[RMDB]
RNA sequence: GGGAACGACUCGAGUAGAGUCGAAAACCGUAGGACCCAAUGAUACUCAUUUGUCAGUCGGAUUUCCAACGGUUCGAAAGAGCGGUUGGCCGGUCGACUUGGAUUUAAUGAGAAAAGUCGGGUCCUAAACGGAAACUGCACGCUUCGGCGUGCAGAAACAAACAUACGUGUUCGCACGUAUGUUUGUAAAAGAAACAACAACAACAAC
Reactivity to DMS in 0.01 (KOAc 150mM, MgCl2 10mM, bicine 150mM(pH8.5), 24C), signal-to-noise 2, nucleotides 027 to 156: c010c010g030u000a070g010g010a030c010c000c010a050a040u020g010a280u000a080c030u010c020a080u000u000u000g000u020c040a050g010u000c010g050g010a040u000u000u000c010c000a040a030c000g030g020u000u000c010g000a140a130a260g020a020g040c010g000g020u010u000g020g010c050c060g020g000u000c020g010a040c010u000u010g030g010a090u000u000u000a030a050u010g000a060g020a090a070a100a300g000u000c040g030g020g010u000c000c000u000a000a020a060c020g020g000a120a090a170c010u000g010c010a000c030g000c000u000u010c300g050g030c010g070u000g010c010a000g000a050a130
Reactivity to 2A3 in 0.01 (KOAc 150mM, MgCl2 10mM, bicine 150mM(pH8.5), 24C), signal-to-noise 5, nucleotides 027 to 156: c000c010g020u020a020g000g010a000c010c010c030a030a050u110g020a050u120a130c010u000c000a010u000u000u030g010u000c020a010g000u000c030g120g010a060u120u070u040c010c000a010a000c030g230g010u000u010c010g050a110a100a030g010a000g010c180g090g000u000u020g030g000c060c090g160g010u020c000g010a000c010u050u160g120g000a030u200u270u210a020a000u000g000a000g060a040a140a000a010g070u050c030g010g000g000u000c000c000u000a000a010a000c020g020g020a100a060a030c000u010g000c010a000c000g010c010u010u100c290g140g000c000g000u000g010c000a000g000a000a010